[RMDB]
RNA sequence: GGGAACGACUCGAGUAGAGUCGAAAACCUGGCUCGAAAUCGUCGACGCAUCGGCGACGGUCCUGCCAUGAGACCGUAACGAGGACAUGUCGCCUCGAAUGGCGUCGGGGAGCCGGCAGCUUACCCCAAAACGACCGCAGCUUCGGCUGCGGUCGAACUUAAGCAGUACGUUCGCGUACUGCUUAAGAAAAGAAACAACAACAACAAC
Reactivity to 2A3 in 0.01 (KOAc 150mM, MgCl2 10mM, bicine 150mM(pH8.5), 24C), signal-to-noise 2, nucleotides 027 to 156: c010c010u020g010g010c000u010c010g090a150a250a220u200c160g070u020c000g040a010c010g000c020a010u040c020g030g000c000g000a000c000g000g000u030c000c010u100g090c070c050a180u220g040a050g110a120c090c090g040u080a070a060c070g030a030g000g000a000c040a150u220g000u010c020g000c020c020u030c020g090a050a050u110g130g020c000g000u000c010g010g010g000g000a000g010c000c060g000g020c040a020g020c060u140u080a120c000c000c000c000a000a100a080a000c000g000a000c000c000g040c000a010g020c030u160u130c290g150g000c000u000g000c030g000g000u000c000g000a000a000